Structure probing data (DMS and 2A3) for a 177-nucleotide construct. For 2A3 the reverse transcriptase was SuperScript II with manganese. For DMS the reverse transcriptase was MarathonRT. The RNA was probed in 150 mM KOAc, 10 mM MgCl2 and 150 mM bicine (pH 8.5) at 24 C.
RNA sequence: GGGAACGACUCGAGUAGAGUCGAAAAUGGUUGAUUAGCACCGCAAAAGUUGGCGGCGACGUAGGCCCCAGAAUUAUGCUUAAAUCAACCACUGACAGCGAAUACGAAAGUACCGCGUACAAUGGUACGCUGUUAUAGCUUUCGAGCUAUAACAGCGAAAAGAAACAACAACAACAAC
Reactivity to DMS in 0.01 (KOAc 150mM, MgCl2 10mM, bicine 150mM(pH8.5), 24C), signal-to-noise 6, nucleotides 027 to 126: u000g010g000u000u000g000a010u000u010a070g030c020a060c240c160g030c170a070a110a080a120g000u000u000g030g010c160g030g000c000g020a060c300g000u000a140g010g010c010c020c010c030a060g000a060a100u010u020a140u000g000c010u000u000a060a030a030u000c000a010a000c000c000a050c100u010g000a110c130a130g020c070g010a090a180u000a020c020g000a080a090a100g010u000a030c060c030g010c020g010u010a100c150a080a080u000g010g010u010a060
Reactivity to 2A3 in 0.01 (KOAc 150mM, MgCl2 10mM, bicine 150mM(pH8.5), 24C), signal-to-noise 4, nucleotides 027 to 126: u050g000g000u000u010g000a010u030u040a030g010c030a020c080c060g080c100a070a120a040a060g100u080u040g050g080c160g020g020c010g030a040c130g090u120a060g230g000c010c000c000c000a010g020a030a100u200u120a060u090g000c010u050u160a040a010a010u010c000a000a000c020c000a010c030u100g040a030c020a030g060c030g060a060a050u110a070c020g020a070a080a000g010u020a020c020c000g000c020g050u040a050c090a090a120u080g060g000u040a010